This 207-nucleotide RNA was probed chemically with 2A3.
RNA sequence: GGGAACGACUCGAGUAGAGUCGAAAAGACGCCUUUAGAAGAAGAGGCUAGGGGGUAUUCCGGUGCGGGAUACUUAGUAAUAUGCAACGCUAAUUGCAUAAGAUUGUAGGACGGAAUUUACAGUCUUUAGAGAUAAGCACGUUCGCGUGCUUAUCAACUUCCGAACACAGUUCGCUGUGUUCGGAAGAAAAGAAACAACAACAACAAC
Reactivity to 2A3 in 0.01 (KOAc 150mM, MgCl2 10mM, bicine 150mM(pH8.5), 24C), signal-to-noise 1, nucleotides 027 to 156: g070a040c070g030c030c020u060u020u090a280g050a260a030g030a050a010g010a040g060g000c030u030a080g040g030g000g000g000u000a050u000u070c060c040g050g120u220g130c130g040g000g010a010u000a020c000u000u060a010g000u090a020a070u040a020u110g000c010a020a050c070g030c180u170a100a000u070u030g000c000a000u010a070a030g030a050u050u070g000u020a030g000g070a020c060g000g060a040a040u100u090u050a050c020a030g030u000c030u040u060u070a100g030a000g000a030u010a000a000g000c000a000c000g000u030u080c160g010c000g070u000g030c010u000u010a000u000c000a000a000
Source: RMDB library M2RFPK, as collected in RNAgym.